[RMDB]
Structure probing data (DMS and 2A3) for a 177-nucleotide construct. For 2A3 the reverse transcriptase was SuperScript II with manganese. Source: RMDB library OK2TRN, as collected in RNAgym. For DMS, 1,903 sequencing reads were counted. Reactivities are given for positions 27 through 126. The 2A3 profile rests on 1,626 reads.
RNA sequence: GGGAACGACUCGAGUAGAGUCGAAAAGAUGAUCCAUACCGAUAGGCAACUUAAUGAUUCGAGCACCCGUUUGUUCGGCAACCAUAAGCCAGGGUAUUAAGUUGGCAUGAUGUUCUGCCUCGCUAACGUACAGUAGCUUCUUCGGAAGCUACUGUACAAAAGAAACAACAACAACAAC
Reactivity to DMS in 0.01 (KOAc 150mM, MgCl2 10mM, bicine 150mM(pH8.5), 24C), signal-to-noise 3, nucleotides 027 to 126: g000a100u000g000a090u000c000c040a240u000a110c080c030g010a120u010a120g010g000c060a050a020c050u000u000a020a040u000g000a110u000u000c030g000a050g010c030a110c070c130c080g010u010u010u000g020u020u000c020g040g000c140a080a070c130c050a040u000a050a110g000c030c010a120g000g020g010u000a030u010u000a040a130g010u000u000g010g000c030a050u020g020a070u000g020u000u010c080u000g010c040c010u010c130g000c120u010a020a110c230
Reactivity to 2A3 in 0.01 (KOAc 150mM, MgCl2 10mM, bicine 150mM(pH8.5), 24C), signal-to-noise 2, nucleotides 027 to 126: g040a060u170g030a070u070c010c000a030u060a120c030c030g030a050u110a160g000g010c030a080a050c040u070u120a100a030u200g120a140u090u080c010g000a000g000c040a030c000c050c010g090u110u100u010g070u010u010c050g010g000c020a030a070c040c010a100u060a150a030g050c010c030a040g050g010g040u030a040u020u100a060a090g060u060u070g040g000c040a010u120g030a020u100g130u110u000c040u070g010c000c010u010c040g020c070u060a090a030c090
The RNA was probed in 150 mM KOAc, 10 mM MgCl2 and 150 mM bicine (pH 8.5) at 24 C. For DMS the reverse transcriptase was MarathonRT.